[RMDB]
RNA sequence: GGGAACGACUCGAGUAGAGUCGAAAAGGAGUACUAAUACUAUUUCACUGUCGUGCUCGCGGUUGAUCUUAGAUAAAUAUAUUUCUUUUUCAUAAAGAAAGUGAGUGGAUCUUCCCUGGAAGUACGAUAGUUUAUCGCUCUUCGGAGCGAUAAACUAAAAAGAAACAACAACAACAAC
Reactivity to DMS in 0.01 (KOAc 150mM, MgCl2 10mM, bicine 150mM(pH8.5), 24C), signal-to-noise 2, nucleotides 027 to 126: g020g000a020g000u000a040c020u000a090a070u000a300c300u020a080u040u000u010c030a140c050u020g010u020c020g030u000g020c010u000c020g010c300g010g040u010u010g010a010u000c000u020u000a050g010a140u020a040a040a120u040a120u030a020u000u000u000c000u000u000u000u020u020c090a080u000a030a010a010g030a010a000a020g020u000g000a100g000u040g000g000a020u000c010u010u000c030c000c040u000g000g000a080a020g010u000a000c050g000a060
Reactivity to 2A3 in 0.01 (KOAc 150mM, MgCl2 10mM, bicine 150mM(pH8.5), 24C), signal-to-noise 3, nucleotides 027 to 126: g060g000a020g040u050a120c110u140a040a150u030a070c010u050a090u050u130u110c090a080c130u100g010u090c000g000u000g010c000u010c080g060c130g000g010u000u010g000a000u000c000u020u190a040g000a080u100a130a170a010u200a070u050a050u080u000u010c000u010u030u000u020u140c200a220u300a150a020a000g010a000a000a000g070u100g120a030g030u140g000g000a000u020c000u010u000c050c020c000u030g140g020a060a030g040u000a020c000g000a000
Overview: An RNA of 177 nucleotides, treated with DMS and 2A3 and read out base by base. As a SHAPE reagent, 2A3 marks flexible, mostly unpaired nucleotides at the ribose 2'-OH. For 2A3, 907 sequencing reads were counted.